[RMDB]
RNA sequence: GGGAACGACUCGAGUAGAGUCGAAAAAAUGCCGCCUCAGUUCCAAGCUCUUUCGUGGCACUGUAAACAGUCCUAUUGAGUUAGGGGCAGUAAACCACGUUGCGAAGCUAAAUUAUCUGGUCGAGAGUUACGAUUCCCUACUUCGGUAGGGAAUCAAGUCUUAUUCACUAUUCGUAGUGAAUAAGACAAAAGAAACAACAACAACAAC
Reactivity to 2A3 in 0.01 (KOAc 150mM, MgCl2 10mM, bicine 150mM(pH8.5), 24C), signal-to-noise 4, nucleotides 027 to 156: a000a010u080g020c030c020g040c010c000u040c030a070g030u070u110c010c010a060a010g000c000u000c020u010u050u040c050g010u050g020g010c150a010c020u030g040u080a100a110a120c050a100g110u060c010c010u010a020u030u140g110a140g290u040u030a010g010g000g000g000c000a000g010u020a020a060a040c010c000a000c020g030u030u050g060c100g120a080a020g020c030u060a080a120a100u220u170a100u070c030u060g030g020u030c030g050a010g000a000g180u100u090a040c080g000a000u000u000c000c000c000u000a000c000u020u030c080g060g000u000a000g000g000g010a000a000u000c000a000a000
Reactivity to DMS in 0.01 (KOAc 150mM, MgCl2 10mM, bicine 150mM(pH8.5), 24C), signal-to-noise 2, nucleotides 027 to 156: a040a050u000g010c020c020g010c020c010u010c040a150g000u020u000c040c010a160a300g020c010u000c010u000u000u000c000g080u000g040g070c030a070c020u010g000u000a040a090a070c080a180g000u000c000c020u000a050u010u000g030a290g000u000u000a040g030g030g000g000c000a050g000u000a060a110a040c020c010a050c050g050u000u000g010c080g000a060a130g000c040u000a050a020a050u010u000a100u000c050u000g030g020u000c040g000a100g000a110g020u010u010a030c100g000a020u000u000c010c000c010u000a010c010u000u010c300g060g020u000a010g020g000g030a000a000u000c000a040a160
An RNA of 207 nucleotides, treated with 2A3 and DMS and read out base by base. 2A3 adducts were read by reverse transcription with SuperScript II with manganese. Source: RMDB library M2RFPK, as collected in RNAgym. The reactions ran in a buffer of 150 mM KOAc, 10 mM MgCl2 and 150 mM bicine (pH 8.5), at 24 C. DMS (dimethyl sulfate) methylates the pairing face of unpaired adenines and cytosines. DMS adducts were read by reverse transcription with MarathonRT.